Chemical mapping of a 177-nucleotide RNA with 2A3 and DMS. 2A3 adducts were read by reverse transcription with SuperScript II with manganese. The data come from the RNA Mapping Database (RMDB), library TTRDEL. For DMS, 4,517 sequencing reads were counted. The reactions ran in a buffer of 150 mM KOAc, 10 mM MgCl2 and 150 mM bicine (pH 8.5), at 24 C. For DMS the reverse transcriptase was MarathonRT.
RNA sequence: GGGAACGACUCGAGUAGAGUCGAAAAGAUAUGGAGCCGUGCAAGCGGUACACUCGGAAACGAGUGGCCGUGAUGACCACGGAACUACUCCUAAGUCAAAAGCGCCAUUGGUUCGCCAAUGGCGCAAUCAAGAUUGUAUCUUCGGAUACAAUCUUGAAAAAGAAACAACAACAACAAC
Reactivity to 2A3 in 0.01 (KOAc 150mM, MgCl2 10mM, bicine 150mM(pH8.5), 24C), signal-to-noise 3, nucleotides 027 to 126: g040a000u060a030u150g000g000a000g010c010c010g000u010g090c030a300a300g000c020g010g040u160a300c000a010c010u010c000g050g000a070a050a070c010g000a000g010u000g000g000c000c000g010u020g040a120u190g030a030c020c050a000c010g000g010a010a020c020u090a030c000u000c010c000u060a190a050g030u040c030a020a040a090a140g010c010g000c010c010a030u010u000g090g000u070u120c270g040c100c020a000a010u000g000g120c000g020c000a000a010
Reactivity to DMS in 0.01 (KOAc 150mM, MgCl2 10mM, bicine 150mM(pH8.5), 24C), signal-to-noise 5, nucleotides 027 to 126: g000a040u000a300u000g000g010a010g000c010c000g010u000g020c020a080a210g000c000g000g000u000a100c000a000c000u000c000g000g000a110a090a190c010g010a010g010u000g010g010c010c000g030u000g000a090u020g010a150c300c010a000c000g000g000a040a010c050u000a300c020u000c000c010u000a040a170g000u010c070a080a080a140a080g010c010g010c000c000a000u000u000g000g010u000u000c210g020c020c010a000a000u000g000g000c000g030c000a010a020